[RMDB]
RNA sequence: GGGAACGACUCGAGUAGAGUCGAAAAGUUUACACAGCCAGACACCAUGCAAAAGCAGUCUUCCCUUUAGAAUGACUGAUGGUAUGCUAAGGUUUUUCAUAGCAUAUCAUUAUUAAAGGUGAAUACAACUCAACGAGUGUUUCGACACUCGUUGAGUAAAAGAAACAACAACAACAAC
Reactivity to 2A3 in 0.01 (KOAc 150mM, MgCl2 10mM, bicine 150mM(pH8.5), 24C), signal-to-noise 2, nucleotides 027 to 126: g000u010u000u110a080c160a020c020a070g060c050c040a020g020a070c020a030c010c010a040u100g000c060a000a000a030a150g060c030a020g000u000c000u000u000c000c000c000u000u070u010a180g020a170a110u100g030a070c040u010g010a000u000g010g000u010a000u010g000c000u010a050a140g110g000u020u050u020u080u200c040a060u020a000g000c000a000u000a000u010c000a000u010u010a010u010u050a010a000a040g040g000u080g040a010a000u060a070c100a080
Reactivity to DMS in 0.01 (KOAc 150mM, MgCl2 10mM, bicine 150mM(pH8.5), 24C), signal-to-noise 2, nucleotides 027 to 126: g030u000u000u020a140c070a190c210a070g000c020c040a150g060a090c040a030c030c020a050u010g000c100a050a050a080a050g040c100a110g000u010c000u000u000c080c160c000u000u000u030a000g000a090a080u000g000a050c090u010g000a020u000g020g020u000a000u000g080c000u000a000a130g020g030u000u010u000u030u040c120a020u000a040g000c000a000u010a000u000c010a000u000u000a100u030u100a000a040a060g000g000u050g000a120a000u020a030c070a110

The record gives the reactivity of an RNA of 177 nucleotides to 2A3 and DMS. The RNA was probed in 150 mM KOAc, 10 mM MgCl2 and 150 mM bicine (pH 8.5) at 24 C. It was measured as part of the RMDB libraries RFM100 and RFMREP. DMS adducts were read by reverse transcription with MarathonRT.